[RMDB]
RNA sequence: GGGAACGACUCGAGUAGAGUCGAAAAAGCGCUGCUGCCUCCACCGUCUCUUCCAAGGGCAGCGGCCAUGUGUUGCUGACUCUCGUCGACCGCAUGAAAGCUGCAGAGAGCCAAGGGGCGCAACUCACUGGUGGUGGGAUUUCGAUCCCACCACCAGAAAAGAAACAACAACAACAAC
Reactivity to 2A3 in 0.01 (KOAc 150mM, MgCl2 10mM, bicine 150mM(pH8.5), 24C), signal-to-noise 1, nucleotides 027 to 126: a000g060c030g010c040u050g000c060u100g020c000c000u080c030c000a090c000c030g000u050c040u000c010u060u290c080c030a210a160g130g070g000c000a000g000c000g010g020c040c000a010u020g030u000g080u070u100g040c020u020g020a040c010u100c030u030c170g040u030c010g060a070c030c010g020c000a000u090g010a170a000a000g010c030u000g000c030a030g020a000g020a000g100c000c000a060a070g000g000g000g000c060g010c000a010a010c020u010c050a080

Chemical mapping of a 177-nucleotide RNA with 2A3. The 2A3 profile rests on 581 reads. It was measured as part of the RMDB library OK1LIB. The reactions ran in a buffer of 150 mM KOAc, 10 mM MgCl2 and 150 mM bicine (pH 8.5), at 24 C.